[RMDB]
An RNA of 177 nucleotides, treated with 2A3 and DMS and read out base by base.
RNA sequence: GGGAACGACUCGAGUAGAGUCGAAAACAAUUUAGAGCAGGGAUGGUGCUAUUGACAGGAAGAAAGAGAAAUGUCCUCAUUGACAAAGAGUCAUGUUCAGUGCAGCUGGCUAGAGCCCUAAGAAGCCGUACUUGAGGACGUUCGCGUCCUCAAGUACAAAAGAAACAACAACAACAAC
Reactivity to 2A3 in 0.01 (KOAc 150mM, MgCl2 10mM, bicine 150mM(pH8.5), 24C), signal-to-noise 2, nucleotides 027 to 126: c050a010a010u000u190u270a130g040a040g100c140a110g020g000g300a190u050g030g000u050g000c090u190a000u010u040g000a000c000a000g080g130a010a020g070a130a130a040g060a030g030a000a170a000u070g000u060c010c040u040c090a150u020u060g000a000c010a000a180a000g150a000g000u010c030a110u040g030u000u060c150a000g020u000g050c020a010g010c030u040g010g000c000u000a000g000a030g090c000c000c030u070a170a070g010a060a000g070c100c170
Reactivity to DMS in 0.01 (KOAc 150mM, MgCl2 10mM, bicine 150mM(pH8.5), 24C), signal-to-noise 2, nucleotides 027 to 126: c000a150a060u070u100u030a080g090a090g020c000a130g000g000g000a110u000g000g020u020g000c040u000a080u030u100g000a040c130a210g060g060a010a090g000a000a030a120g060a220g000a050a030a060u000g000u000c020c030u010c150a060u000u100g000a090c000a170a100a120g000a090g000u010c030a040u000g000u100u000c010a080g060u040g030c170a050g000c020u010g000g010c040u010a080g010a170g010c010c020c000u030a100a040g000a120a030g000c080c090

The reactions ran in a buffer of 150 mM KOAc, 10 mM MgCl2 and 150 mM bicine (pH 8.5), at 24 C. Reactivities are given for positions 27 through 126.